[RMDB]
RNA sequence: GGGAACGACUCGAGUAGAGUCGAAAAGGCUUCAAAGAAGAAGGGGUGAGGGAGGCCGGUCCAUGCCCAAGCAUGGUGCAAUCUCUUGGCAUCCCUUCCCUCUCCUGAUUUCAGAGAAGUUGAUGACGCCUGAGAUGUUUUCAGAAAUCCUCUGUGAGGUGAAGUCAGAAUUCGUUCUGACUUCACCAAAAGAAACAACAACAACAAC
Reactivity to 2A3 in 0.01 (KOAc 150mM, MgCl2 10mM, bicine 150mM(pH8.5), 24C), signal-to-noise 1, nucleotides 027 to 156: g030g020c000u040u080c060a040a010a030g080a050a000g020a060a030g000g000g000g050u100g010a030g000g000g000a000g040g010c060c070g000g030u050c040c000a000u000g030c010c060c140a040a050g000c030a000u070g010g000u160g120c050a140a260u000c010u080c000u200u130g010g000c040a010u020c000c000c000u000u020c040c000c000u000c000u020c000c000u060g080a100u020u130u100c030a020g000a020g000a150a000g020u060u030g010a060u050g020a020c100g050c050c040u030g010a060g010a120u090g070u050u100u060u130c020a000g020a030a170a060u040c030c010u000c050u060g010u080g040a010
Reactivity to DMS in 0.01 (KOAc 150mM, MgCl2 10mM, bicine 150mM(pH8.5), 24C), signal-to-noise 1, nucleotides 027 to 156: g010g060c030u000u000c000a020a100a110g000a220a100g000a130a050g010g020g010g060u030g010a110g010g040g000a090g000g050c070c010g000g000u030c000c010a050u000g000c020c040c210a130a250g010c030a040u010g000g000u010g000c050a120a080u020c110u000c090u030u000g090g040c030a050u000c000c020c000u000u000c230c050c000u000c000u000c020c000u000g010a240u000u000u000c050a150g000a270g010a080a030g040u030u010g050a140u000g000a130c170g020c020c000u010g010a080g000a130u000g000u000u000u000u000c060a090g000a070a070a130u000c030c030u000c030u000g000u000g010a200
The data come from the RNA Mapping Database (RMDB), library OK3TST. The record gives the reactivity of an RNA of 207 nucleotides to 2A3 and DMS. 2A3 is a SHAPE reagent: it acylates the 2'-hydroxyl of flexible nucleotides of all four kinds. Values cover nucleotides 27 to 156. For DMS the reverse transcriptase was MarathonRT.